[RMDB]
RNA sequence: GGGAACGACUCGAGUAGAGUCGAAAAGAUAUGGACUCCUAGCUCGCCACGCCUCUAUGCAUUGUGUACAUCGGAAACGAUGUACACAAUGCAUAUGCGUGGAACUACGAGCUACGAGUCCUAAGUCCACAGUAGGUGGGUUCGCCCACCUACUGUGAAAAGAAACAACAACAACAAC
Reactivity to DMS in 0.01 (KOAc 150mM, MgCl2 10mM, bicine 150mM(pH8.5), 24C), signal-to-noise 1, nucleotides 027 to 126: g020a100u000a300u000g010g000a010c000u020c000c060u000a000g020c010u000c000g010c020c000a010c000g000c000c030u010c020u000a000u000g000c000a000u020u000g010u000g000u000a000c000a030u000c000g050g000a170a110a240c000g000a020u000g020u000a000c000a000c000a000a000u000g000c000a000u010a000u000g000c010g000u010g000g000a020a010c100u050a300c020g000a000g000c000u000a000c300g010a020g010u000c000c000u000a010a080g000u000c050
Background
Chemical mapping of a 177-nucleotide RNA with DMS.